The record gives the reactivity of an RNA of 207 nucleotides to DMS. The reactions ran in a buffer of 150 mM KOAc, 10 mM MgCl2 and 150 mM bicine (pH 8.5), at 24 C. For DMS the reverse transcriptase was MarathonRT. Reactivities are given for positions 27 through 156. The data come from the RNA Mapping Database (RMDB), library RNAMAK.
[RMDB]
RNA sequence: GGGAACGACUCGAGUAGAGUCGAAAAGAAACACGCUGGGAGCAAGCGGAGCGGAUAGGCAAGGCUUACUGAAGCGCGCACGGUAAGCUGAUGACCCUAUCCCGCUUACUUGCUCCUGUGCUGAAGCGCGCACGGCAACCGAAAGGUGCGAAUAUAACGUUCUACUAAACUUCGGUUUAGUAGAACGAAAAGAAACAACAACAACAAC
Reactivity to DMS in 0.01 (KOAc 150mM, MgCl2 10mM, bicine 150mM(pH8.5), 24C), signal-to-noise 1, nucleotides 027 to 156: g030a140a080a080c040a080c010g010c010u010g050g000g010a080g000c000a010a000g020c010g000g010a080g070c100g000g000a060u020a000g010g000c010a090a080g040g050c020u000u010a000c000u010g020a060a050g010c030g040c030g000c000a300c030g000g000u000a010a010g010c000u000g030a030u030g000a050c300c000c030u000a010u000c000c000c010g000c000u000u010a010c000u000u010g010c030u010c000c000u000g000u000g000c060u010g010a050a030g030c050g000c030g000c020a300c010g010g000c000a060a070c000c000g020a140a140a170g010g030u000g020c040g000a060a130u000a070u030a050a290